[RMDB]
RNA sequence: GGGAACGACUCGAGUAGAGUCGAAAAGACGGAAAAGAUCGAACCUAAGAAGAUCAGGAAGUGCGAGCCGAAUCCUAGGGCACCUAGGGACGCAUCGUCCGAUGCGAAAUAAACACUAACGUCGAAACCGCUAUUUAAUCUUCGGAUUAAAUAGCGGAAAAGAAACAACAACAACAAC
Reactivity to DMS in 0.01 (KOAc 150mM, MgCl2 10mM, bicine 150mM(pH8.5), 24C), signal-to-noise 3, nucleotides 027 to 126: g000a030c030g000g000a130a090a160a090g050a030u000c040g000a080a160c090c100u010a110a130g020a200a140g010a040u010c010a090g000g010a080a020g010u030g020c020g000a200g000c090c030g010a060a080u040c000c040u000a050g000g000g000c130a040c110c020u030a000g000g000g000a140c030g000c000a030u000c030g000u030c160c080g000a030u000g000c030g050a080a060a020u060a080a100a110c120a030c030u000a030a150c050g000u000c050g010a110a070a120
Reactivity to 2A3 in 0.01 (KOAc 150mM, MgCl2 10mM, bicine 150mM(pH8.5), 24C), signal-to-noise 3, nucleotides 027 to 126: g010a000c030g030g000a070a070a050a000g020a020u040c040g040a050a080c000c020u060a070a080g090a040a040g050a060u030c020a000g070g110a090a000g010u070g010c020g030a000g040c050c020g060a040a050u040c000c000u010a020g000g030g130c110a080c150c000u000a000g000g000g050a040c000g000c000a020u020c000g190u070c100c240g040a030u000g000c030g060a030a080a000u180a030a080a000c050a000c030u030a150a010c010g000u010c030g080a140a030a000